RNA sequence: GGGAACGACUCGAGUAGAGUCGAAAAAGGAAUACUUCCAUGUGUCCCAGGACUAAGGGAGGAGGGUCUCAGGCAUUGGUCCCUCUGGGCCAGCAAGGGCAGCAGGGAGAGCCCCGGUUCAGAGGACACAGAGCUGAGAAUUCGUUCUCAGCUCUGUAAAAGAAACAACAACAACAAC
Reactivity to DMS in 0.01 (KOAc 150mM, MgCl2 10mM, bicine 150mM(pH8.5), 24C), signal-to-noise 2, nucleotides 027 to 126: a050g000g000a100a090u010a120c150u010u000c030c010a080u010g010u000g010u020c000c010c010a180g010g010a050c110u020a050a110g000g000g010a050g010g000a090g000g010g030u000c050u010c100a090g000g000c060a140u000u010g010g010u000c060c020c040u010c040u000g000g000g010c010c000a100g020c200a070a130g010g020g010c000a070g010c080a090g000g010g010a040g050a250g000c020c000c020c080g020g000u000u000c000a010g000a060g000g000a080c080
Reactivity to 2A3 in 0.01 (KOAc 150mM, MgCl2 10mM, bicine 150mM(pH8.5), 24C), signal-to-noise 1, nucleotides 027 to 126: a000g160g000a130a040u130a280c100u070u080c020c010a070u100g080u000g040u130c080c010c000a030g040g030a040c100u120a060a110g030g010g020a020g040g000a070g010g080g000u070c020u000c100a010g090g000c070a110u050u080g030g000u070c060c000c010u010c000u000g010g000g000c000c000a050g000c080a100a100g010g000g000c010a030g060c000a040g090g030g020a120g020a020g060c010c020c010c010g000g000u010u030c000a020g010a030g030g010a020c010